This 207-nucleotide RNA was probed chemically with 2A3. Source: RMDB library M2RFPK, as collected in RNAgym. The reactions ran in a buffer of 150 mM KOAc, 10 mM MgCl2 and 150 mM bicine (pH 8.5), at 24 C.

RNA sequence: GGGAACGACUCGAGUAGAGUCGAAAACGGAAGCAUUAAAACCAUUCGAGCUAGUCAAUGCGUGGCGUGUCUCUCCGUAGCGUGUUGGCGAAUGUAAAGAGUGACUAAGCAUGUAGUACCGAGGAUGAUAAGAGCAAUUCGUUCGCGAAUUGCUCAAUCACGCUAAGUGGUUCGCCACUUAGCGUGAAAAAGAAACAACAACAACAAC
Reactivity to 2A3 in 0.01 (KOAc 150mM, MgCl2 10mM, bicine 150mM(pH8.5), 24C), signal-to-noise 1, nucleotides 027 to 156: c070g020g080a000a080g040c080a060u060u060a040a020a000a080c030c000a010u070u060c010g010a050g080c080u100a030g000u060c010a040a000u040g020c010g010u050g120g020c000g020u120g050u100c010u000c020u000c060c000g000u000a040g000c040g000u020g030u000u050g010g010c010g000a100a030u080g090u140a090a140a000g060a050g000u030g060a060c070u030a040a000g060c040a080u050g070u150a070g030u090a070c000c060g000a050g090g050a000u110g040a010u060a190a130g000a000g010c000a040a000u000u000c040g030u040u060c230g000c000g180a000a010u000u000g010c000u010c000a000a000